About this RNA: Chemical mapping of a 177-nucleotide RNA with DMS and 2A3. The RNA was probed in 150 mM KOAc, 10 mM MgCl2 and 150 mM bicine (pH 8.5) at 24 C.
[RMDB]
RNA sequence: GGGAACGACUCGAGUAGAGUCGAAAAUAAUCUGACCUGCUAUGAGGUCAGACAUCGUCAUAGCAUCAGGUAAUAGUAGACUUGAGAUCUUACUACAUGGGUUAACACACAAACUCAAAUUUGUGAGGAUAAUAUACUAUUUCGAUAGUGUGUUAUCAAAAGAAACAACAACAACAAC
Reactivity to DMS in 0.01 (KOAc 150mM, MgCl2 10mM, bicine 150mM(pH8.5), 24C), signal-to-noise 9, nucleotides 027 to 126: u020a080a070u010c000u000g010a020c130c120u000g000c050u010a030u010g010a040g010g010u020c130a080g010a090c210a040u020c030g010u000c020a020u000a030g010c030a080u000c020a030g000g000u010a060a050u010a050g010u010a070g000a030c040u000u020g000a090g000a090u020c020u010u020a110c020u010a050c150a080u020g010g000g000u000u010a060a080c120a130c070a030c060a020a010a050c050u020c160a050a080a150u010u010u010g010u000g010a090g000
Reactivity to 2A3 in 0.01 (KOAc 150mM, MgCl2 10mM, bicine 150mM(pH8.5), 24C), signal-to-noise 9, nucleotides 027 to 126: u150a010a040u020c010u010g020a030c050c030u040g020c010u040a030u090g040a010g030g040u030c040a010g050a020c030a060u080c030g260u010c010a020u000a020g000c000a030u090c020a020g030g030u050a060a040u030a090g070u020a010g020a050c020u040u120g060a050g030a160u070c020u060u110a050c030u040a040c020a100u130g030g000g040u090u130a190a020c080a000c010a010c040a140a040a030c070u130c110a050a150a190u080u070u050g060u030g030a080g060